[RMDB]
RNA sequence: GGGAACGACUCGAGUAGAGUCGAAAAUUCUGGAUGAUCUGGCUCGGUAUCUUGAGCUCGCCGAUAUCGUGGAUAAGUCCGGCCAGACCGGUCUCUUCCAGUUCAAUGGGGUUCAUGCCCAGCUCGCCACACCGUGAAUAUUCGUAUUCACGGUGUGAAAAGAAACAACAACAACAAC
Reactivity to DMS in 0.01 (KOAc 150mM, MgCl2 10mM, bicine 150mM(pH8.5), 24C), signal-to-noise 4, nucleotides 027 to 126: u010u000c010u000g020g010a250u000g010a080u000c030u010g000g000c040u000c080g020g020u000a040u000c030u010u000g010a110g010c060u000c110g020c100c060g000a050u000a030u000c040g020u000g010g010a080u010a070a100g000u000c020c010g000g010c030c150a100g010a220c010c000g020g000u000c040u000c090u000u000c000c010a020g000u000u000c080a070a190u010g020g010g010g010u000u000c140a100u010g000c010c000c000a120g000c080u000c070g000c280
Reactivity to 2A3 in 0.01 (KOAc 150mM, MgCl2 10mM, bicine 150mM(pH8.5), 24C), signal-to-noise 3, nucleotides 027 to 126: u020u010c010u010g080g040a050u060g010a050u110c040u050g010g030c030u030c100g000g010u060a050u060c070u030u130g070a040g020c030u030c030g030c040c000g030a040u040a040u130c070g040u050g040g030a090u060a180a040g040u010c010c000g020g020c040c040a060g030a110c040c020g020g020u000c000u000c000u060u000c020c010a010g010u000u070c040a050a080u120g000g000g060g000u030u130c030a030u180g020c020c000c000a020g040c030u040c030g050c030

Source: RMDB library OK2TRN, as collected in RNAgym. Chemical mapping of a 177-nucleotide RNA with DMS and 2A3. For DMS the reverse transcriptase was MarathonRT. The RNA was probed in 150 mM KOAc, 10 mM MgCl2 and 150 mM bicine (pH 8.5) at 24 C.